[RMDB]
RNA sequence: GGGAACGACUCGAGUAGAGUCGAAAACAGAUCACGUUCGCGUGAUCUGGAAAGAUUUCUCGUAGAGCCACGAGAAGUAAAUUUAAGAAAGCUCACUGAGAACCACCCGCGGGUUCGCCCGCGGGAAGAAUAAGAUCAGAUUCGUCUGAUCUUAUUCAAAAGAAACAACAACAACAAC
Reactivity to DMS in 0.01 (KOAc 150mM, MgCl2 10mM, bicine 150mM(pH8.5), 24C), signal-to-noise 3, nucleotides 027 to 126: c000a000g000a000u000c000a010c000g010u000u000c210g050c010g030u000g000a000u010c000u000g000g010a070a080a180g000a090u000u000u000c000u000c010g010u000a160g010a030g010c050c110a160c030g000a190g000a000a030g010u000a060a080a070u020u000u000a080a200g000a090a080a130g000c000u000c020a090c170u000g000a070g010a090a090c110c150a150c030c000c010g000c010g010g000g010u000u010c240g000c020c000c000g010c000g010g000g000a000a010
Reactivity to 2A3 in 0.01 (KOAc 150mM, MgCl2 10mM, bicine 150mM(pH8.5), 24C), signal-to-noise 3, nucleotides 027 to 126: c010a000g000a000u000c000a010c010g010u070u080c200g030c010g130u010g010a000u000c000u000g000g000a020a070a010g060a060u020u020u010c010u000c000g000u040a090g010a030g080c030c100a020c030g010a010g020a040a030g040u080a050a140a200u080u140u130a110a080g040a140a090a000g010c000u050c020a020c070u110g080a060g030a130a030c010c010a020c010c020c020g030c020g010g020g000u030u070c210g050c020c000c000g000c040g020g000g000a000a000
An RNA of 177 nucleotides, treated with DMS and 2A3 and read out base by base. For DMS the reverse transcriptase was MarathonRT. The RNA was probed in 150 mM KOAc, 10 mM MgCl2 and 150 mM bicine (pH 8.5) at 24 C.